[RMDB]
RNA sequence: GGGAACGACUCGAGUAGAGUCGAAAAGAUAUGGAUAGGGACGUGUAGGGACACGCACAAACUAUUAAAUCGGAAACGAUUUAACGAAUUUGUGAACUACGUGCCCUACACGUCCCUAUCCUAAGUCCGCCUACUUAAAGUUCGCUUUAAGUAGGCGAAAAGAAACAACAACAACAAC
Reactivity to DMS in 0.01 (KOAc 150mM, MgCl2 10mM, bicine 150mM(pH8.5), 24C), signal-to-noise 2, nucleotides 027 to 126: g000a030u000a300u000g000g020a020u000a000g020g010g020a010c000g000u000g000u000a000g020g000g020a190c000a010c000g000c030a030c010a000a000a040c030u010a300u000u000a000a020a010u000c000g000g020a150a210a190c000g000a030u000u000u000a000a000c110g000a040a140u000u000u000g000u000g000a120a090c110u040a270c080g010u000g000c000c000c000u000a000c000a000c030g000u000c000c000c000u000a000u000c000c000u000a000a090g000u010c050

Background:
This 177-nucleotide RNA was probed chemically with DMS. Values cover nucleotides 27 to 126. The DMS profile rests on 1,508 reads. Source: RMDB library TTRINS, as collected in RNAgym.